[RMDB]
RNA sequence: GGGAACGACUCGAGUAGAGUCGAAAAUUCCUCAUUCUUAACAAUCAUGCACAAACUUAUUGUAAUCAUAAUGUACAACUCCUUUGUCUUCUAUAUAUUGCAGACAUAAGUAAUAUAUGGUAUUUUCAUACCUCCGGAGUUUCGACUCCGGAGGUAUAAAAGAAACAACAACAACAAC
Reactivity to 2A3 in 0.01 (KOAc 150mM, MgCl2 10mM, bicine 150mM(pH8.5), 24C), signal-to-noise 2, nucleotides 027 to 126: u020u000c000c000u050c020a100u080u030c010u120u170a040a070c000a000a060u190c050a000u130g080c060a030c060a050a060a070c070u090u110a090u030u200g050u090a040a080u090c060a100u040a230a030u120g050u060a030c070a150a100c150u070c000c010u110u140u040g080u100c020u100u000c000u070a000u000a030u000a010u030u050g010c010a010g050a170c050a270u150a220a000g000u000a000a070u030a030u050a040u030g000g000u110a110u030u020u000u080c040